[RMDB]
RNA sequence: GGGAACGACUCGAGUAGAGUCGAAAAUUGUCAAUGUAUUUGUGACGAAUAAACAUCUUGAGGUCCUCCAGGUUGCUUGCCGCUGAAAGCAUUGAAGCAGUCUUCACUAGGGUAAAAGUGUUAGGCGCCAGACAUUCCAGUUCGCUGGAAUGUCUGGAAAAGAAACAACAACAACAAC
Reactivity to DMS in 0.01 (KOAc 150mM, MgCl2 10mM, bicine 150mM(pH8.5), 24C), signal-to-noise 2, nucleotides 027 to 126: u000u000g030u000c000a090a030u020g010u030a030u040u000u010g010u040g000a040c020g000a060a040u040a070a140a080c070a040u020c050u000u000g000a150g000g010u000c070c050u010c040c050a020g000g020u010u010g030c030u000u000g000c130c000g000c060u000g000a060a020a100g040c030a040u090u030g080a100a090g020c080a020g010u020c020u000u020c060a010c070u050a170g000g030g000u030a030a070a050a030g000u000g000u020u020a080g000g000c040g000
Reactivity to 2A3 in 0.01 (KOAc 150mM, MgCl2 10mM, bicine 150mM(pH8.5), 24C), signal-to-noise 1, nucleotides 027 to 126: u140u040g000u040c020a010a000u090g010u190a220u040u130u090g150u030g010a010c020g030a030a030u180a070a070a000c110a050u040c010u040u070g030a050g020g000u020c000c000u000c000c050a000g010g040u040u010g090c080u010u120g060c010c000g010c040u020g060a070a000a000g040c010a030u000u140g080a030a030g020c000a020g000u000c000u090u050c040a020c010u020a030g100g030g130u140a090a080a030a000g010u000g100u090u020a080g010g000c040g060
Chemical mapping of a 177-nucleotide RNA with DMS and 2A3. The RNA was probed in 150 mM KOAc, 10 mM MgCl2 and 150 mM bicine (pH 8.5) at 24 C. Reactivities are given for positions 27 through 126.